[RMDB]
RNA sequence: GGGAACGACUCGAGUAGAGUCGAAAAUCACAAUCGCAGAAACGGUACGAUACAGCUUCGCGUUAGCAAUAAUUUGCCCCGGACGCGUGACAUAAAGCAGAACGCCAACCGGCAGACCAAUCACAAAGAUUAGUGAUGUCUUCGGACAUCACUAAUCAAAAGAAACAACAACAACAAC
Reactivity to 2A3 in 0.01 (KOAc 150mM, MgCl2 10mM, bicine 150mM(pH8.5), 24C), signal-to-noise 3, nucleotides 027 to 126: u070c010a000c020a100a040u080c050g010c070a040g110a060a080a010c060g020g030u110a060c050g010a010u070a130c080a040g020c040u030u020c010g020c030g050u010u070a020g000c020a030a060u180a170a140u100u060u090g030c020c010c010c030g030g000a030c000g030c000g050u070g030a050c010a070u180a030a060a050g020c030a040g040a080a010c030g000c010c010a030a090c000c000g000g000c000a010g020a040c000c030a030a100u120c080a100c020a110a170a000
Reactivity to DMS in 0.01 (KOAc 150mM, MgCl2 10mM, bicine 150mM(pH8.5), 24C), signal-to-noise 2, nucleotides 027 to 126: u010c090a090c130a110a060u010c050g050c070a110g000a060a130a080c070g000g000u000a090c050g000a150u000a090c160a150g000c050u000u000c040g000c030g000u010u000a120g000c060a030a020u020a120a130u000u000u020g030c010c080c120c020g020g030a140c100g030c010g020u000g050a080c130a110u000a030a030a060g000c080a080g000a130a020c040g010c080c030a070a080c020c050g030g000c130a040g000a060c060c090a050a050u010c090a100c120a070a110a100